Background:
The data come from the RNA Mapping Database (RMDB), library RNAMAK. This 207-nucleotide RNA was probed chemically with DMS and 2A3.
RNA sequence: GGGAACGACUCGAGUAGAGUCGAAAAGGGAAUGUUCGCAUUCCCAAAUCCUAAGUCAGAACGAAUGCGAUUUGUCAGCGUGGGUAUCGGAAACGAUACUCACGCUUGGAUUUAAUCGCACUAUUCUGAUAUGGAAAAAUCCCUGAUUCGUCAGGGAACUUAUCAGAGGUUUCGACCUCUGAUAAGUAAAAGAAACAACAACAACAAC
Reactivity to DMS in 0.01 (KOAc 150mM, MgCl2 10mM, bicine 150mM(pH8.5), 24C), signal-to-noise 3, nucleotides 027 to 156: g000g000g020a020a020u010g010u000u010c280g040c030a040u000u000c010c000c000a000a030a060u010c010c010u000a080a300g010u000c010a020g020a030a030c040g020a070a020u000g020c000g020a010u010u000u000g020u000c010a040g000c000g050u010g010g000g040u010a010u010c000g000g020a210a140a220c020g010a010u000a010c000u000c000a000c000g000c010u000u010g010g020a020u000u000u000a020a010u000c000g030c000a020c010u010a060u000u000c020u000g020a040u000a300u000g000g030a000a080a100a100a120u000c000c000c000u010g000a060u000u010c300g020u000c000a020g000g080g040a020
Reactivity to 2A3 in 0.01 (KOAc 150mM, MgCl2 10mM, bicine 150mM(pH8.5), 24C), signal-to-noise 3, nucleotides 027 to 156: g010g000g010a020a010u020g010u080u170c250g010c140a010u000u010c000c000c010a010a020a010u020c000c000u020a090a030g010u010c000a000g000a020a020c040g040a300a180u020g000c000g000a000u010u010u040g020u010c010a010g000c000g000u000g000g000g000u000a000u000c000g030g000a060a070a040c000g000a000u000a000c000u000c010a000c000g000c000u000u020g010g000a000u060u010u210a000a000u010c000g000c000a000c000u000a010u000u000c000u000g010a010u020a100u110g050g020a030a130a020a020a050u050c030c020c000u000g000a030u010u140c270g060u010c060a000g000g000g000a010